[RMDB]
Structure probing data (2A3 and DMS) for a 177-nucleotide construct. Conditions: 150 mM KOAc, 10 mM MgCl2 and 150 mM bicine (pH 8.5), 24 C.
RNA sequence: GGGAACGACUCGAGUAGAGUCGAAAAGAUAUGGACCUCGCAGAUAGGGAGGAGUCGUUCGGAAACGAACGGUCUCCGAAGAACUGUAGAGGUCCUAAGUCAAAACAUGUUAGUUCGCUAACAUGAACAGUAUCCACUCGUUCGCGAGUGGAUACUGAAAAGAAACAACAACAACAAC
Reactivity to 2A3 in 0.01 (KOAc 150mM, MgCl2 10mM, bicine 150mM(pH8.5), 24C), signal-to-noise 1, nucleotides 027 to 126: g010a000u010a040u090g010g010a000c000c000u000c000g040c010a010g180a270u300a210g300g150g080a160g010g000a000g030u000c000g030u000u010c000g010g030a010a000a000c010g010a010a000c000g020g000u090c020u030c000c000g020a030a010g070a000a010c020u010g010u180a300g060a000g000g000u000c000c000u000a010a000g010u000c000a000a000a010a040c010a000u000g000u020u010a090g020u030u040c300g000c180u000a000a000c000a000u000g030a110a020
Reactivity to DMS in 0.01 (KOAc 150mM, MgCl2 10mM, bicine 150mM(pH8.5), 24C), signal-to-noise 2, nucleotides 027 to 126: g000a030u000a210u010g000g000a020c000c000u000c020g010c000a010g020a150u000a100g030g010g020a300g020g030a010g020u020c000g000u000u000c010g030g000a060a070a140c000g010a000a000c000g010g000u010c000u000c000c000g000a160a140g000a060a040c010u000g000u000a040g040a000g010g000u000c000c000u000a000a080g000u000c020a130a130a100a180c010a010u020g000u010u000a000g010u000u000c290g030c000u000a000a000c000a000u000g000a050a100

Annotation
Reactivities are given for positions 27 through 126. 2A3 adducts were read by reverse transcription with SuperScript II with manganese. The 2A3 profile rests on 1,663 reads. DMS adducts were read by reverse transcription with MarathonRT.